RNA sequence: GGGAACGACUCGAGUAGAGUCGAAAAUUGCCGACAUUGAGGUUGCCGAUAUUGCCGACACCCAAAUUGAUGUUUGGCAACGCCGGCUGCCACGACGCCAGCUGUGCCGCUGCCGCCGAGGAUGCGGCCAGCCUCUUGAUUUCGAUCAAGAGGCUGGAAAAGAAACAACAACAACAAC
Reactivity to 2A3 in 0.01 (KOAc 150mM, MgCl2 10mM, bicine 150mM(pH8.5), 24C), signal-to-noise 9, nucleotides 027 to 126: u070u060g030c010c000g030a080c060a060u030u090g060a050g040g010u040u030g000c000c000g020a030u030a080u120u090g030c020c010g020a010c000a020c010c080c050a080a180a140u150u220g080a090u050g100u030u100u290g000g000c000a010a000c020g020c020c010g000g010c020u020g010c010c000a050c040g060a020c030g020c030c010a020g000c020u070g060u160g110c020c020g010c030u050g030c010c010g000c010c020g070a070g090g030a050u070g010c000g010g010
Reactivity to DMS in 0.01 (KOAc 150mM, MgCl2 10mM, bicine 150mM(pH8.5), 24C), signal-to-noise 9, nucleotides 027 to 126: u010u000g010c000c010g010a070c090a060u000u000g010a090g020g010u000u000g020c000c010g010a060u000a120u000u000g000c020c000g000a020c020a020c030c030c160a070a100a200u010u010g000a040u000g000u000u000u010g040g010c000a010a020c070g020c050c010g000g000c010u000g010c020c020a140c050g010a050c050g010c090c020a050g010c020u000g010u010g010c050c050g000c050u000g010c040c020g010c040c040g000a130g010g010a120u000g010c020g010g000